[RMDB]
RNA sequence: GGGAACGACUCGAGUAGAGUCGAAAAAGUCCGGGUCCGAAGAUGAUGCUGGCGCCAGCGCGUCCGGAUCCGAAGCUGUCGGUAGUGCAUACGCAGAGGUUGGCGAUCCCUCUGCGCUGACGACGGAAGUUACCUGUUUGCAGCAGUGUGCCGUACACUAUAGCGUACACUUCGGUGUACGCUAUAGAAAAGAAACAACAACAACAAC
Reactivity to DMS in 0.01 (KOAc 150mM, MgCl2 10mM, bicine 150mM(pH8.5), 24C), signal-to-noise 2, nucleotides 027 to 156: a110g000u000c030c010g010g030g010u000c000c030g000a030a130g050a060u000g040a090u020g080c010u010g020g010c190g020c140c040a120g040c030g020c030g000u000c020c020g000g020a020u000c010c000g000a030a040g000c030u000g010u000c020g000g020u000a110g030u010g030c060a190u000a040c000g000c000a020g010a040g020g000u000u010g030g010c100g010a120u020c090c010c000u000c000u010g000c020g010c020u010g010a160c000g000a090c010g000g030a090a070g000u000u000a100c040c010u000g010u020u030u020g020c070a200g030c020a080g020u020g010u010g000c000c030g020u000a130c070a200
Reactivity to 2A3 in 0.01 (KOAc 150mM, MgCl2 10mM, bicine 150mM(pH8.5), 24C), signal-to-noise 3, nucleotides 027 to 156: a010g120u060c030c000g040g000g000u030c000c010g050a170a090g000a060u070g020a190u100g030c020u040g040g240c070g160c160c020a000g010c040g010c000g010u000c020c000g010g000a000u000c000c000g030a040a020g040c020u040g050u080c030g080g000u050a060g030u070g140c010a060u020a190c050g010c000a000g000a010g050g000u110u140g160g000c050g020a100u170c000c010c000u000c010u000g010c000g000c000u000g010a020c020g000a000c010g020g000a030a030g130u100u130a060c010c020u020g050u060u040u180g080c060a010g000c000a010g020u040g040u020g160c000c040g050u080a010c030a010